[RMDB]
RNA sequence: GGGAACGACUCGAGUAGAGUCGAAAAGAUAUGGAUCUGACUUGCGAGCUGGAUUCGGAAACGAAUUCAGCAGCGAUGAGCAAGGUCAGAUCCUAAGUCAAAAGUCCAAGUCUUCGGACUUGGACAACAAGUCUGUAGAGUUCGCUCUACAGACUUGAAAAGAAACAACAACAACAAC
Reactivity to 2A3 in 0.01 (KOAc 150mM, MgCl2 10mM, bicine 150mM(pH8.5), 24C), signal-to-noise 4, nucleotides 027 to 126: g000a000u010a010u060g000g010a000u000c000u010g020a020c000u040u060g050c220g250a070g030c000u010g010g010a000u000u000c000g000g000a020a010a000c010g000a010a000u010u000c010a000g000c000a000g000c070g250a300u300g300a070g030c020a020a010g130g090u040c000a010g000a000u000c000c000u000a000a000g000u000c000a060a070a150a120g000u000c000c000a000a000g000u010c020u050u250c300g090g000a010c000u000u000g000g000a000c000a000a010
Reactivity to DMS in 0.01 (KOAc 150mM, MgCl2 10mM, bicine 150mM(pH8.5), 24C), signal-to-noise 4, nucleotides 027 to 126: g000a010u000a070u010g000g000a020u000c000u000g000a020c000u000u000g030c050g010a180g010c000u000g010g000a010u000u000c000g020g010a010a010a040c000g020a030a010u000u010c000a010g030c000a030g020c180g020a150u010g000a180g000c010a030a010g000g010u000c000a010g010a000u010c000c000u000a000a070g000u010c010a090a150a110a190g000u000c010c010a010a010g000u000c000u010u010c300g020g000a010c000u000u000g000g000a010c020a010a090

Structure probing data (2A3 and DMS) for a 177-nucleotide construct. The DMS profile rests on 5,759 reads. 2A3 is a SHAPE reagent: it acylates the 2'-hydroxyl of flexible nucleotides of all four kinds. The RNA was probed in 150 mM KOAc, 10 mM MgCl2 and 150 mM bicine (pH 8.5) at 24 C. 2A3 adducts were read by reverse transcription with SuperScript II with manganese.